[RMDB]
RNA sequence: GGGAACGACUCGAGUAGAGUCGAAAAGAUAUAAACGCGCGUGCUGUGUCUAACGCGAAUUACCCAGUUAUUUUCGACUUUACUCGAGUCGUUAUAGCGUGAUAUGACACAGUUAUCCGCGAACGAACGUUCGACCAUAAUUCGUUAUGGUCGAACGAAAAGAAACAACAACAACAAC
Reactivity to DMS in 0.01 (KOAc 150mM, MgCl2 10mM, bicine 150mM(pH8.5), 24C), signal-to-noise 1, nucleotides 027 to 126: g010a120u000a100u000a060a090a160c080g000c010g010c040g000u000g020c030u010g000u000g000u000c000u010a090a010c000g000c000g000a070a090u010u010a100c100c040c130a100g010u010u000a140u000u000u000u000c000g000a050c000u000u000u000a010c010u000c010g000a000g000u000c000g000u010u000a000u000a120g000c020g010u000g010a010u000a010u010g020a030c050a020c030a030g000u010u000a040u000c050c000g040c000g000a070a160c100g020a090a170
About this RNA:
Chemical mapping of a 177-nucleotide RNA with DMS. The RNA was probed in 150 mM KOAc, 10 mM MgCl2 and 150 mM bicine (pH 8.5) at 24 C. Values cover nucleotides 27 to 126. Source: RMDB library M2PK90, as collected in RNAgym.